[RMDB]
RNA sequence: GGGAACGACUCGAGUAGAGUCGAAAAUAGUGAAAGGACUAAGAAAGACCCGAGGCGAGGCCGGAACAGGCCGAUUUCUAGCCGCCAAGUGGAGAACAGGUUGGAGCGGUGCGCCGGGCUUAGCGGCAUCCUCAGGCUUAUUCGUAAGCCUGAGGAUAAAAGAAACAACAACAACAAC
Reactivity to DMS in 0.01 (KOAc 150mM, MgCl2 10mM, bicine 150mM(pH8.5), 24C), signal-to-noise 1, nucleotides 027 to 126: u000a040g000u010g000a150a090a140g020g010a060c030u000a030a110g030a080a190a180g020a090c050c000c020g010a080g010g000c030g020a050g000g010c010c000g000g010a050a040c190a100g000g020c000c010g030a060u000u000u010c020u010a070g000c010c010g020c080c070a120a110g000u000g030g020a100g020a070a060c100a100g030g010u000u000g020g020a070g010c050g000g010u020g020c130g000c050c010g000g010g000c050u020u000a040g010c000g000g000c090